[RMDB]
RNA sequence: GGGAACGACUCGAGUAGAGUCGAAAAACCGCGUAGAGACGCGAGGAUUGGUAGCCCUAAUCUUAAAGCAGCUACAGCGACGACGUUGACGGACGGUUUGGGUAACUUAACCAUGUGUGGUACAACAUAUCGAAGAUGUCUUCGGACAUCUUCGAUAAAAAGAAACAACAACAACAAC
Reactivity to DMS in 0.01 (KOAc 150mM, MgCl2 10mM, bicine 150mM(pH8.5), 24C), signal-to-noise 3, nucleotides 027 to 126: a120c010c000g020c060g040u010a080g000a080g000a010c040g010c030g000a060g000g000a140u010u020g020g000u030a190g010c150c080c000u030a020a060u010c020u010u050a040a060a180g000c100a140g030c010u010a040c030a110g000c020g050a140c040g000a010c150g030u000u000g000a110c110g000g000a130c070g000g000u000u000u000g000g000g000u020a090a000c060u030u000a050a110c050c060a050u030g000u000g020u040g000g020u000a040c080a050a090c280a160